[RMDB]
RNA sequence: GGGAACGACUCGAGUAGAGUCGAAAAGGAGGAACCUUCGGGUUCCUCCCAUUACCGAGAACCUUGCUCGGUAUAAACAAGGAACCCUUGGAAACAAGGGAAAUAUUCACGUCUUCGGACGUGAAAAGUCUGUCUUAGAGUUCGCUCUAAGACAGACAAAAGAAACAACAACAACAAC
Reactivity to DMS in 0.01 (KOAc 150mM, MgCl2 10mM, bicine 150mM(pH8.5), 24C), signal-to-noise 1, nucleotides 027 to 126: g060g000a000g010g000a000a000c030c000u010u010c170g020g020g040u000u000c000c000u000c000c000c020a040u010u030a270c000c040g000a020g010a060a240c060c030u000u000g030c000u000c000g020g000u020a020u010a090a030a070c160a030a080g010g000a180a180c030c000c000u020u000g010g010a150a190a110c010a010a000g000g000g000a040a040a100u000a200u030u000c000a000c030g000u000c000u000u020c080g020g010a000c000g020u000g000a000a010a030a080